[RMDB]
RNA sequence: GGGAACGACUCGAGUAGAGUCGAAAACGCGUUUAAUUGCUCCUCUCGCUUCUGUUCUAGGUGCAUGUGUCCCACGGGCUACACGGGAAAGGAUUGCGACACCAAGUACAAGCCCUGCUCGCCAUCGCGGAAGUGUCGUAUUCGUACGACACUUCCGAAAAGAAACAACAACAACAAC
Reactivity to 2A3 in 0.01 (KOAc 150mM, MgCl2 10mM, bicine 150mM(pH8.5), 24C), signal-to-noise 1, nucleotides 027 to 126: c040g050c040g040u000u070u230a200a100u090u090g020c020u140c030c020u000c010u010c000g040c000u110u050c000u110g030u050u090c040u050a060g020g070u070g070c050a090u130g050u010g000u020c000c000c010a030c040g040g000g000c020u130a060c060a010c030g020g080g080a090a090a030g100g000a070u070u080g000c000g040a060c050a020c050c020a060a020g010u040a100c010a060a050g010c000c000c000u020g010c000u010c010g000c000c020a080u090c040g000
Reactivity to DMS in 0.01 (KOAc 150mM, MgCl2 10mM, bicine 150mM(pH8.5), 24C), signal-to-noise 1, nucleotides 027 to 126: c060g030c150g000u000u000u010a070a090u000u010g000c040u000c000c050u000c010u000c130g000c030u000u010c060u020g020u000u000c020u010a010g000g020u000g000c070a050u000g010u000g000u010c020c000c030a080c190g010g000g000c040u010a060c180a090c230g000g030g010a070a060a090g000g020a080u020u000g020c060g000a090c080a050c010c000a000a060g020u010a090c090a110a140g000c030c000c010u000g000c040u000c000g010c060c050a050u000c150g010
Chemical mapping of a 177-nucleotide RNA with 2A3 and DMS.
DMS adducts were read by reverse transcription with MarathonRT.
The RNA was probed in 150 mM KOAc, 10 mM MgCl2 and 150 mM bicine (pH 8.5) at 24 C.
It was measured as part of the RMDB library OK2TRN.
The 2A3 profile rests on 1,132 reads.
The DMS profile rests on 909 reads.